[RMDB]
This 177-nucleotide RNA was probed chemically with 2A3 and DMS. The reactions ran in a buffer of 150 mM KOAc, 10 mM MgCl2 and 150 mM bicine (pH 8.5), at 24 C. Source: RMDB library RFM100, as collected in RNAgym.
RNA sequence: GGGAACGACUCGAGUAGAGUCGAAAAACGGAAGCUUGGCGAGGCCAAGACCCAGCCGGAAGAGAAGGCUAGAUCUCCCGACCCAAGCUCCUAGCACGGAUACCGAGCACCCACGCGGAGCACAUGCGUUAAAAUCGCAGUUCGCUGCGAUUUUAACAAAAGAAACAACAACAACAAC
Reactivity to 2A3 in 0.01 (KOAc 150mM, MgCl2 10mM, bicine 150mM(pH8.5), 24C), signal-to-noise 4, nucleotides 027 to 126: a000c070g020g000a140a030g000c000u000u000g000g000c050g020a040g050g000c060c050a040a000g010a010c030c020c000a020g000c000c010g080g060a250a050g110a080g070a270a080g020g000c010u010a010g000a100u000c020u000c010c010c000g010a040c000c000c000a000a030g000c000u000c000c010u030a030g000c070a040c060g040g050a040u070a050c010c020g000a010g010c010a050c000c000c020a020c030g030c030g030g020a010g070c000a030c020a080u110g030c020
Reactivity to DMS in 0.01 (KOAc 150mM, MgCl2 10mM, bicine 150mM(pH8.5), 24C), signal-to-noise 2, nucleotides 027 to 126: a140c160g000g000a060a010g050c000u000u000g020g000c040g000a300g010g000c000c170a080a000g000a030c010c050c030a030g000c000c010g030g000a210a170g000a210g000a090a150g040g000c010u000a070g010a100u000c010u000c100c010c050g000a300c300c000c010a000a050g000c010u000c020c010u000a130g000c130a030c050g000g000a060u000a030c020c020g000a000g010c100a030c060c010c000a070c090g000c030g000g000a070g000c010a000c110a010u000g080c190